Annotation: Structure probing data (2A3 and DMS) for a 177-nucleotide construct.
RNA sequence: GGGAACGACUCGAGUAGAGUCGAAAAAUACCGAUAUGGUGGGUUUAUCCUACUAUAAUUGGAAUGAGAUAACUGUAAAUAUGUUGUUGAUAUUCAAUUGGAGGGCAAGUCUGGUGCCAGCAGCCGCGUAUUGGAUAAUGUUCGCAUUAUCCAAUACAAAAGAAACAACAACAACAAC
Reactivity to 2A3 in 0.01 (KOAc 150mM, MgCl2 10mM, bicine 150mM(pH8.5), 24C), signal-to-noise 3, nucleotides 027 to 126: a000u060a020c010c000g000a000u000a000u030g010g000u020g010g060g000u010u250u130a100u220c020c000u000a000c000u000a010u020a090a170u020u020g010g020a050a070u100g010a060g010a060u100a100a030c020u070g120u300a050a120a130u180a120u130g010u000u000g010u010u010g030a050u030a110u090u010c020a020a040u040u050g070g030a070g030g020g010c010a020a010g020u000c030u050g090g000u070g070c010c010a040g030c030a010g030c000c020g040c040
Reactivity to DMS in 0.01 (KOAc 150mM, MgCl2 10mM, bicine 150mM(pH8.5), 24C), signal-to-noise 3, nucleotides 027 to 126: a080u010a130c000c000g000a050u000a020u000g020g030u000g010g000g000u000u010u010a140u030c000c000u010a030c020u000a030u000a070a090u010u000g000g000a100a110u000g010a190g000a090u010a050a110c080u010g010u010a100a090a150u010a080u000g000u000u000g000u010u000g000a120u010a090u000u000c010a040a130u010u000g020g010a090g000g000g040c040a040a070g010u010c050u000g030g010u000g030c060c040a080g000c050a080g010c030c050g020c160
2A3 adducts were read by reverse transcription with SuperScript II with manganese. Conditions: 150 mM KOAc, 10 mM MgCl2 and 150 mM bicine (pH 8.5), 24 C. High DMS reactivity at an A or C suggests that its Watson-Crick edge is free. For DMS, 2,142 sequencing reads were counted.